[RMDB]
This 207-nucleotide RNA was probed chemically with 2A3 and DMS. Source: RMDB library OK3TST, as collected in RNAgym. Conditions: 150 mM KOAc, 10 mM MgCl2 and 150 mM bicine (pH 8.5), 24 C. For DMS, 2,004 sequencing reads were counted.
RNA sequence: GGGAACGACUCGAGUAGAGUCGAAAACGAAUGUAUGGCUUUAAGAUAGCUGUGAUACCGUAUACAGGUCGGUGUCGGAGAUUCGAAUCUCUUUAAGGCGACUUAUGUCACGAUGAUGGAAUCUAUCUUAUCAAAUGAUAUAUUUUUCAUAAAUACACCCUACGUUAUACUUCGGUAUAACGUAGGGAAAAGAAACAACAACAACAAC
Reactivity to 2A3 in 0.01 (KOAc 150mM, MgCl2 10mM, bicine 150mM(pH8.5), 24C), signal-to-noise 4, nucleotides 027 to 156: c030g020a010a040u130g030u180a070u080g060g000c040u100u100u070a040a030g020a070u200a080g030c010u020g020u050g070a010u010a010c010c020g030u060a070u040a180c130a060g010g160u040c020g000g040u020g010u020c020g010g010a040g000a020u090u220c180g050a120a090u010c000u000c000u000u090u060a070a020g040g000c010g020a030c010u060u070a030u090g000u000c000a000c070g020a020u140g010a010u050g000g050a050a000u000c000u020a020u000c010u030u130a080u140c040a070a120a170u120g010a000u000a000u000a040u050u050u010u040u050c000a010u080a180a110a050u140a090c050a070
Reactivity to DMS in 0.01 (KOAc 150mM, MgCl2 10mM, bicine 150mM(pH8.5), 24C), signal-to-noise 2, nucleotides 027 to 156: c100g000a150a110u010g010u000a060u000g010g020c010u000u010u030a010a030g010a120u000a020g040c120u000g020u000g010a210u000a000c000c020g020u000a120u000a110c090a160g020g010u000c020g010g070u000g050u000c280g010g000a040g000a080u000u000c240g050a200a210u000c030u000c020u000u000u000a060a230g020g000c050g000a080c020u010u000a020u000g020u010c060a050c090g010a110u000g010a140u000g020g040a180a130u000c040u000a030u010c010u020u000a080u010c000a080a060a110u000g000a110u020a060u000a040u000u000u000u000u000c010a070u000a040a060a120u010a060c000a170